[RMDB]
The record gives the reactivity of an RNA of 177 nucleotides to DMS and 2A3.
The data come from the RNA Mapping Database (RMDB), library OK2TRN.
RNA sequence: GGGAACGACUCGAGUAGAGUCGAAAAGGGCAUGUGCAUAUGUAUACACGUAUAUAUAUUCAUAUGUACAAACAUACGUACAUACAUACGUACAUACAUACGUACAUACAUACGUAAUACAUACGUAGCCAAAAUGGUGAUUCGUCACCAUUUUGGCAAAAGAAACAACAACAACAAC
Reactivity to DMS in 0.01 (KOAc 150mM, MgCl2 10mM, bicine 150mM(pH8.5), 24C), signal-to-noise 2, nucleotides 027 to 126: g000g010g020c110a000u000g010u000g030c010a040u000a000u000g010u000a010u010a070c130a040c000g010u000a000u000a080u000a000u000a110u000u000c020a020u000a000u000g000u000a110c300a090a150a100c050a040u000a000c040g010u000a020c100a020u000a030c090a030u000a000c000g020u010a120c080a020u000a000c040a000u000a020c100g000u000a040c020a000u030a050c060a150u020a020c000g000u000a050a070u050a060c170a120u020a000c010g000u010a070
Reactivity to 2A3 in 0.01 (KOAc 150mM, MgCl2 10mM, bicine 150mM(pH8.5), 24C), signal-to-noise 2, nucleotides 027 to 126: g040g020g010c080a010u020g000u010g010c020a010u000a000u010g000u020a010u020a040c050a000c070g020u010a020u020a000u000a010u010a080u170u080c040a010u040a020u080g000u010a020c010a020a240a000c070a030u140a050c090g000u000a000c010a050u030a000c020a020u000a000c010g030u000a000c020a080u020a000c040a000u010a000c000g000u010a000c000a010u040a050c010a040u080a020c010g030u010a080a010u110a280c090a040u060a020c010g020u020a030

For 2A3, 2,565 sequencing reads were counted. Values cover nucleotides 27 to 126.